An RNA of 177 nucleotides, treated with 2A3 and DMS and read out base by base. The reactions ran in a buffer of 150 mM KOAc, 10 mM MgCl2 and 150 mM bicine (pH 8.5), at 24 C.

RNA sequence: GGGAACGACUCGAGUAGAGUCGAAAACUAGUGCCAUUCGUGGCACUAGAAGGGGUCCAGCCUGGAAAGGCUGCAGGUAUUGGAAUGGUCGGGCCGCCAUUCAAGGUACGCUAUUCGUAGCGUACAACUACCGCUUACAAUUCGUUGUAAGCGGUAGAAAAGAAACAACAACAACAAC
Reactivity to 2A3 in 0.01 (KOAc 150mM, MgCl2 10mM, bicine 150mM(pH8.5), 24C), signal-to-noise 5, nucleotides 027 to 126: c000u010a000g000u000g010c000c000a030u040u030c250g100u080g010g000c010a000c000u000a000g000a010a010g050g030g000g000u020c010c010a020g010c000c010u070g090g130a170a130a020g020g000c010u020g000c050a040g120g040u190a170u170u300g120g020a010a000u010g000g030u040c040g030g000g000c010c000g000c010c000a000u010u000c020a000a020g150g000u000a000c000g000c000u020a020u060u110c240g090u050a000g000c000g000u000a000c000a000a000
Reactivity to DMS in 0.01 (KOAc 150mM, MgCl2 10mM, bicine 150mM(pH8.5), 24C), signal-to-noise 5, nucleotides 027 to 126: c000u000a000g010u000g000c010c000a030u000u010c200g030u000g010g010c000a000c000u010a000g000a080a070g020g010g010g010u000c180c020a060g010c010c010u010g010g040a120a160a010g010g020c000u000g030c210a040g000g010u010a090u010u000g010g000a010a020u000g000g010u000c050g000g000g020c020c030g000c000c020a020u000u000c010a120a090g010g010u000a010c000g000c000u000a020u000u000c180g010u000a010g000c000g020u000a000c010a070a160